[RMDB]
RNA sequence: GGGAACGACUCGAGUAGAGUCGAAAAUUGCCCUUUCCUUUCUGCAUAAAUGCCCUCAUUAGAGGCACUUAUAAAGUCAGGAAGAAAGCACCCACCUGCCAUGGUGCGGGGUUCAAAACGAAGGAAAUGUACUCAUCACAUUCGUGUGAUGAGUACAAAAAGAAACAACAACAACAAC
Reactivity to 2A3 in 0.01 (KOAc 150mM, MgCl2 10mM, bicine 150mM(pH8.5), 24C), signal-to-noise 4, nucleotides 027 to 126: u090u100g080c000c000c000u000u020u010c020c020u020u010u000c010u010g000c000a000u000a010a030a000u030g040c060c010c010u070c040a170u130u300a080g010a050g020g010c000a000c010u010u010a000u020a020a030a000g010u020c000a000g010g000a000a000g020a020a040a000g030c020a060c000c020c000a020c000c010u150g120c040c060a240u300g040g010u050g020c060g010g000g020g000u040u070c040a060a010a090a120c080g120a100a030g110g050a070a050a030
Reactivity to DMS in 0.01 (KOAc 150mM, MgCl2 10mM, bicine 150mM(pH8.5), 24C), signal-to-noise 4, nucleotides 027 to 126: u020u010g010c000c030c020u010u020u000c000c000u000u030u000c010u010g000c300a020u000a000a000a030u000g000c120c040c050u000c060a170u020u030a090g010a060g000g040c000a000c100u020u000a000u000a060a300a040g000u000c040a030g010g000a000a030g010a050a090a080g000c040a060c030c010c090a080c000c010u000g000c080c070a180u010g000g000u020g000c070g030g000g000g000u000u020c160a090a070a090a080c130g000a030a170g000g020a120a100a140